[RMDB]
RNA sequence: GGGAACGACUCGAGUAGAGUCGAAAAGAGCACUUAACUCUGAGUGGGAUUAAGUUAAUACAGAAUAUACCCGACACCUCACUGAGGGUCAUGGGAAUUAUACGCCAAUUGGCCAUAUACAACAAUGUACCACCAUCUUAUUCGUAAGAUGGUGGUAAAAAGAAACAACAACAACAAC
Reactivity to 2A3 in 0.01 (KOAc 150mM, MgCl2 10mM, bicine 150mM(pH8.5), 24C), signal-to-noise 4, nucleotides 027 to 126: g030a020g000c060a000c020u040u040a030a020c030u030c030u120g150a110g120u290g020g080g050a200u040u040a060a010g010u020u100a140a040u110a120c040a040g170a140a020u140a030u070a180c000c000c030g000a010c070a300c020c000u070c030a260c220u190g040a010g000g050g010u000c030a050u180g010g010g010a020a000u090u030a050u010a090c060g020c050c000a090a300u090u140g030g000c010c040a030u100a020u070a180c050a050a010c010a150a140u180g000
Reactivity to DMS in 0.01 (KOAc 150mM, MgCl2 10mM, bicine 150mM(pH8.5), 24C), signal-to-noise 4, nucleotides 027 to 126: g020a180g020c160a070c030u010u000a030a070c040u000c010u010g010a130g060u010g010g020g000a070u000u010a060a040g000u000u010a060a080u000a180c150a100g010a120a120u030a080u000a080c030c000c030g000a050c090a140c040c000u000c020a120c200u020g000a030g010g010g010u000c010a070u010g040g000g010a090a050u000u000a060u020a080c230g000c010c010a160a120u010u000g030g000c010c060a030u000a060u010a050c120a050a060c140a030a090u000g010